[RMDB]
RNA sequence: GGGAACGACUCGAGUAGAGUCGAAAAACGCCGCAACACGCGGGCGGCGUACCGUACAGAGAGAAGAAAAGGGGCAUAUUUCCCUGCUUGCAGCGAUGCGAGCAAAACAAAAAUUUCCAUGAAUACGCAUUAUACUUAACUUCGGUUAAGUAUAAUGAAAAGAAACAACAACAACAAC
Reactivity to DMS in 0.01 (KOAc 150mM, MgCl2 10mM, bicine 150mM(pH8.5), 24C), signal-to-noise 5, nucleotides 027 to 126: a050c010g000c000c000g020c010a040a050c050a120c170g010c150g020g010g020c020g000g000c010g000u000a060c030c020g010u000a080c120a100g000a110g010a080g010a060a070g000a050a060a110a080g000g000g000g000c210a070u000a100u010u000u000c000c000c020u000g000c010u000u000g000c000a020g000c300g010a150u000g020c000g010a000g010c010a040a030a060a030c150a030a030a080a070a110u000u000u000c030c050a080u010g000a090a110u000a070c180g000
Reactivity to 2A3 in 0.01 (KOAc 150mM, MgCl2 10mM, bicine 150mM(pH8.5), 24C), signal-to-noise 5, nucleotides 027 to 126: a000c010g010c010c010g000c010a030a040c050a030c120g100c240g020g010g000c000g000g000c000g010u000a050c020c000g010u050a020c060a020g140a010g020a000g030a250a020g050a030a130a030a020g000g000g030g030c040a040u040a130u190u080u040c000c000c000u010g000c000u000u010g000c000a010g000c010g060a050u020g000c000g000a000g000c000a000a060a000a000c030a000a100a020a030a050u080u100u050c080c040a090u150g110a130a040u150a050c050g000
Background
Structure probing data (DMS and 2A3) for a 177-nucleotide construct. Source: RMDB library RFMREP, as collected in RNAgym. DMS adducts were read by reverse transcription with MarathonRT. The 2A3 profile rests on 6,537 reads. In probing experiments dimethyl sulfate is read out at A N1 and C N3, which are open when not base-paired. The DMS profile rests on 5,341 reads.